[RMDB]
An RNA of 177 nucleotides, treated with DMS and 2A3 and read out base by base. The RNA was probed in 150 mM KOAc, 10 mM MgCl2 and 150 mM bicine (pH 8.5) at 24 C.
RNA sequence: GGGAACGACUCGAGUAGAGUCGAAAAGGGGCGAAGGCGUCGCCUCGCCGGUCACCUCGGUGGCCCUGCGACGUCUAUCGGAGCAACCGGUCGAUCGCCGCCAGGUGUUCUACAGCGCGAGCCGCUACGUGACGAUUUAUUUCGAUAAAUCGUCACGAAAAGAAACAACAACAACAAC
Reactivity to DMS in 0.01 (KOAc 150mM, MgCl2 10mM, bicine 150mM(pH8.5), 24C), signal-to-noise 2, nucleotides 027 to 126: g020g010g010g010c030g000a060a040g010g020c020g000u000c020g010c030c130u010c190g030c080c160g010g010u000c010a000c010c030u000c300g030g030u000g000g000c000c020c060u060g000c000g010a010c010g010u010c010u000a040u000c010g000g000a130g020c160a090a100c050c010g000g000u000c130g020a140u000c080g000c030c010g010c010c030a010g000g000u000g010u000u000c040u020a080c120a090g020c070g020c060g030a090g010c070c030g000c050u000a120
Reactivity to 2A3 in 0.01 (KOAc 150mM, MgCl2 10mM, bicine 150mM(pH8.5), 24C), signal-to-noise 1, nucleotides 027 to 126: g030g020g000g030c010g050a050a010g010g000c010g030u010c010g020c020c030u030c030g030c070c030g000g000u000c010a000c010c000u080c230g060g000u000g000g000c000c000c010u080g010c040g020a000c020g000u000c020u040a150u070c020g080g020a050g050c010a070a160c000c020g000g000u020c080g080a120u070c040g000c030c030g020c050c010a050g000g040u060g020u060u060c030u030a060c040a050g030c030g010c030g090a040g070c050c020g020c010u050a040